Overview:
Source: RMDB library M2PK90, as collected in RNAgym. Chemical mapping of a 177-nucleotide RNA with DMS and 2A3. Conditions: 150 mM KOAc, 10 mM MgCl2 and 150 mM bicine (pH 8.5), 24 C.

RNA sequence: GGGAACGACUCGAGUAGAGUCGAAAACAAUCUAAGCAAAAAUGUGAUCUUGCUUGUAAAUACAAUUUUGAGAGGUUAAUAAAUUACAAGUAGUGCUAUUUUUGUGCCUCUCUGCAAUAAAAUUAAAAUGUCUAAGUCAAUUCGUUGACUUAGACAUAAAAGAAACAACAACAACAAC
Reactivity to DMS in 0.01 (KOAc 150mM, MgCl2 10mM, bicine 150mM(pH8.5), 24C), signal-to-noise 2, nucleotides 027 to 126: c020a120a060u010c090u010a040a080g030c010a000a030a020a050a050u000g020u010g010a170u010c090u020u000g020c000u010u000g000u000a000a040a080u010a110c140a090a080u000u000u000u010g000a020g000a030g010g010u010u010a050a070u000a030a040a040u000u000a010c000a020a050g000u000a030g000u000g050c080u000a010u000u000u000u000u000g030u000g010c010c000u010c000u000c000u000g000c140a070a060u010a060a030a050a060u000u000a040a100a100
Reactivity to 2A3 in 0.01 (KOAc 150mM, MgCl2 10mM, bicine 150mM(pH8.5), 24C), signal-to-noise 3, nucleotides 027 to 126: c020a010a050u090c040u170a090a020g000c030a000a000a000a030a110u290g160u080g300a260u020c050u030u030g000c000u010u010g010u000a040a060a050u170a070c070a070a160u120u080u060u160g010a020g000a000g000g010u020u030a040a060u090a120a200a070u080u040a040c020a030a000g060u070a010g120u070g140c010u020a010u000u010u000u000u000g020u010g000c000c000u000c010u030c000u000g000c010a040a180u140a290a100a020a020u150u190a150a150a030